[RMDB]
RNA sequence: GGGAACGACUCGAGUAGAGUCGAAAAGCGUCCUGGUUCGCCAGGACGCAAAUAAAUGGUAGACUGAGUCCGUCUAACUCAGAUAACCAGAAAUAGACGGAAAAACUGACUUGUUCGCAAGUCAGAACAGAAACGAAAUCUUCGGAUUUCGUUUCUGAAAAGAAACAACAACAACAAC
Reactivity to DMS in 0.01 (KOAc 150mM, MgCl2 10mM, bicine 150mM(pH8.5), 24C), signal-to-noise 1, nucleotides 027 to 126: g020c000g050u010c000c010u020g020g020u000u000c170g020c010c000a040g000g000a000c000g030c010a000a010a040u000a030a040a060u030g000g010u010a070g000a160c000u000g030a020g000u010c050c030g010u000c010u000a050a180c010u010c030a010g010a120u010a070a220c020c050a070g010a030a040a140u010a030g000a010c000g000g010a060a050a030a100a160c040u000g000a010c000u000u000g010u000u030c180g010c000a030a050g010u000c000a000g010a100a130
Reactivity to 2A3 in 0.01 (KOAc 150mM, MgCl2 10mM, bicine 150mM(pH8.5), 24C), signal-to-noise 1, nucleotides 027 to 126: g000c010g020u030c020c010u000g010g060u070u080c260g000c040c010a010g000g000a000c020g000c000a000a000a000u010a000a000a010u070g050g030u120a050g080a300c000u010g000a010g030u050c010c000g010u000c020u020a160a060c000u000c020a000g010a100u090a060a040c010c020a000g000a030a070a010u000a000g000a020c000g010g030a050a060a010a010a050c000u000g000a000c010u020u000g020u070u110c240g030c060a000a010g000u000c000a000g000a020a040